[RMDB]
RNA sequence: GGGAACGACUCGAGUAGAGUCGAAAAGAACUGAGCCCCAAGGAUGACUGUGAAAGUUGGCUCUACACGCUGCUCGGCCUCAUCCUUCCAAAAGAUGUUCCAUGGCGUGAUCUCCAGGACUGGAAUGCCCUGGCACUCCAUUCGUGGAGUGCCAGGGAAAAGAAACAACAACAACAAC
Reactivity to 2A3 in 0.01 (KOAc 150mM, MgCl2 10mM, bicine 150mM(pH8.5), 24C), signal-to-noise 2, nucleotides 027 to 126: g080a050a020c100u090g030a000g030c000c000c000c040a000a030g060g000a100u120g000a030c070u080g010u100g220a160a110a060g070u100u040g060g040c020u020c000u030a020c030a030c120g050c020u000g000c010u030c040g000g010c020c000u000c010a020u000c000c000u080u000c060c020a060a050a000a030g060a010u170g020u030u090c010c070a120u070g050g000c030g010u030g100a030u000c000u050c020c000a020g000g050a080c030u000g060g020a130a060u170g080
This 177-nucleotide RNA was probed chemically with 2A3. It was measured as part of the RMDB library OK1LIB. Reactivities are given for positions 27 through 126. The RNA was probed in 150 mM KOAc, 10 mM MgCl2 and 150 mM bicine (pH 8.5) at 24 C.